[RMDB]
RNA sequence: GGGAACGACUCGAGUAGAGUCGAAAAUGAUGUGCGUGACUGCGAAGCGGUCCUAUUGUGUGGUAAGGCCGGAAUCCACAUGAUAGGUUUGUGCUAUGUCCGGCCAAAUAGCACGUGCACAUCUAAAGGGAACGUCGAGGUUCGCUUCGACGUUCCCAAAAGAAACAACAACAACAAC
Reactivity to 2A3 in 0.01 (KOAc 150mM, MgCl2 10mM, bicine 150mM(pH8.5), 24C), signal-to-noise 3, nucleotides 027 to 126: u160g000a010u010g000u010g000c010g070u070g070a050c010u030g030c090g150a180a050g040c020g020g070u020c000c000u010a000u010u050g000u010g000u020g010g070u130a050a080g040g010c000c000g000g000a010a090u080c000c000a000c000a010u000g040a030u000a020g080g020u030u070u100g010u030g000c020u000a020u060g040u000c010c000g000g000c000c000a060a020a010u090a010g020c000a000c050g050u060g010c010a010c000a000u000c010u010a070a050a000
Reactivity to DMS in 0.01 (KOAc 150mM, MgCl2 10mM, bicine 150mM(pH8.5), 24C), signal-to-noise 1, nucleotides 027 to 126: u030g050a000u010g020u000g030c000g020u030g000a040c000u000g000c020g030a110a160g020c030g000g000u010c000c030u010a030u000u000g000u000g040u000g000g000u000a130a300g000g020c030c000g000g000a100a100u020c010c000a050c000a000u060g000a020u000a010g020g080u000u040u020g010u000g000c000u010a020u000g000u000c000c000g000g010c060c020a000a060a110u010a150g020c000a030c000g020u020g030c000a030c000a000u000c000u000a030a030a090

The record gives the reactivity of an RNA of 177 nucleotides to 2A3 and DMS. DMS adducts were read by reverse transcription with MarathonRT. As a SHAPE reagent, 2A3 marks flexible, mostly unpaired nucleotides at the ribose 2'-OH. Source: RMDB library OK1LIB, as collected in RNAgym. The reactions ran in a buffer of 150 mM KOAc, 10 mM MgCl2 and 150 mM bicine (pH 8.5), at 24 C.